[RMDB]
RNA sequence: GGGAACGACUCGAGUAGAGUCGAAAAGAUAUGGAUGAACAAGACAUGCUCAGUAUCGGAAACGAUAUAAUGAGCAACAGCUUGUUUCAUCCUAAGUCAAAGUCCUGGUCGUUCGCGACCAGGACAACCUGUUAAUAGAGUUCGCUCUAUUAACAGGAAAAGAAACAACAACAACAAC
Reactivity to DMS in 0.01 (KOAc 150mM, MgCl2 10mM, bicine 150mM(pH8.5), 24C), signal-to-noise 4, nucleotides 027 to 126: g000a010u000a050u010g010g000a010u010g000a020a000c000a010a000g010a030c110a210u010g020c000u000c000a080g000u000a000u000c000g010g000a010a020a040c000g020a000u000a010u000a120a120u000g010a010g030c000a080a050c220a160g010c000u000u000g000u000u010u000c000a010u000c000c000u000a000a080g000u000c010a120a140a170g010u000c010c000u000g000g000u000c000g020u000u010c290g030c020g030a010c000c000a010g010g000a000c010a020a060
Reactivity to 2A3 in 0.01 (KOAc 150mM, MgCl2 10mM, bicine 150mM(pH8.5), 24C), signal-to-noise 6, nucleotides 027 to 126: g010a000u020a000u060g000g000a000u000g000a010a000c000a010a000g060a040c150a210u300g010c000u000c010a000g000u010a000u000c010g000g020a020a010a000c020g010a000u010a000u020a070a300u100g000a010g000c020a000a010c010a010g000c000u000u030g010u050u150u170c000a000u000c000c000u000a010a000g000u000c030a120a100a090g000u000c000c000u000g010g000u010c020g010u050u120c300g020c020g170a000c000c000a000g000g000a000c000a000a000